[RMDB]
Source: RMDB library TTRINS, as collected in RNAgym.
Structure probing data (DMS and 2A3) for a 177-nucleotide construct.
High DMS reactivity at an A or C suggests that its Watson-Crick edge is free.

RNA sequence: GGGAACGACUCGAGUAGAGUCGAAAAGAUAUGGAGUUAGAACUACGUCUAUGAUUCCUUUGAUCGAUCGCUAGUCGGAAACGACUAGCGAUCGGGAGGAAUCAACAAUGACGCUAACUCCUAAGUCGAAGAGGAUAUGGUUCGCCAUAUCCUCUUCAAAAGAAACAACAACAACAAC
Reactivity to DMS in 0.01 (KOAc 150mM, MgCl2 10mM, bicine 150mM(pH8.5), 24C), signal-to-noise 2, nucleotides 027 to 126: g010a050u010a150u010g020g000a040g010u000u000a030g000a140a130c240u010a300c010g010u000c010u000a100u020g000a010u000u000c010c000u000u010u010g010a120u000c000g020a020u000c000g000c000u000a010g000u000c000g010g010a090a050a220c000g020a040c000u000a000g000c000g000a000u000c000g020g000g010a000g000g000a030a010u000c000a020a020c300a060a110u000g000a010c010g010c010u000a010a000c000u010c000c000u000a020a040g000u000c090
Reactivity to 2A3 in 0.01 (KOAc 150mM, MgCl2 10mM, bicine 150mM(pH8.5), 24C), signal-to-noise 4, nucleotides 027 to 126: g070a010u110a040u130g030g000a030g010u020u020a020g030a300a160c220u260a070c300g000u020c020u070a260u180g010a010u000u030c020c090u040u060u300g300a300u300c030g010a000u020c000g000c030u010a000g000u000c000g000g000a040a060a020c010g000a000c000u010a010g010c020g000a010u000c000g000g040g000a010g020g000a000a000u040c000a020a030c040a030a070u240g010a020c010g000c020u000a000a000c000u000c000c000u010a030a010g040u040c060